The data come from the RNA Mapping Database (RMDB), library 15KLIB. Chemical mapping of a 170-nucleotide RNA with 2A3 and DMS. The 2A3 profile rests on 7,265 reads. Conditions: 150 mM KOAc, 10 mM MgCl2 and 150 mM bicine (pH 8.5), 24 C.
RNA sequence: GGGAACGACUCGAGUAGAGUCGAAAAACUCGGUAAUUCGCCCCGAAAUGAGGACUCCGGGGUCCCCUUCCGAAGGAACGGAGGGGGGUGACUAGGAAUCAGGAUCCAGUGGAUCCGUGGGAAUUAUAUAGCCUGGUGUUCGCACCAGGCAAAAGAAACAACAACAACAAC
Reactivity to 2A3 in 0.01 (KOAc 150mM, MgCl2 10mM, bicine 150mM(pH8.5), 24C), signal-to-noise 3, nucleotides 027 to 129: a000c020u060c020g040g000u050a020a040u040u020c010g180c010c000c000c010g090a030a080a200u160g040a080g010g090a050c040u000c000c020g000g000g000g060u040c000c000c000c000u000u060c000c000g070a140a100g160g090a220a130c020g010g000a030g010g000g010g000g010g030u000g020a040c020u050a050g000g000a010a030u030c010a010g000g010a010u010c010c010a060g060u190g200g000a000u000c020c000g000u010g000g000g010a010a020u110u050a060u010a030u030a070
Reactivity to DMS in 0.01 (KOAc 150mM, MgCl2 10mM, bicine 150mM(pH8.5), 24C), signal-to-noise 2, nucleotides 027 to 129: a060c030u030c000g000g000u030a000a000u010u000c100g030c000c000c000c000g020a060a100a050u060g000a060g050g010a090c170u020c010c030g040g010g050g000u040c040c000c000c000u090u000c010c000g040a240a230g000g000a100a070c030g000g000a010g010g000g000g020g000g010u010g010a080c080u010a070g030g010a020a060u040c040a100g010g010a020u020c010c020a160g060u030g000g000a000u020c020c010g000u000g000g000g000a050a040u040u030a000u010a030u030a000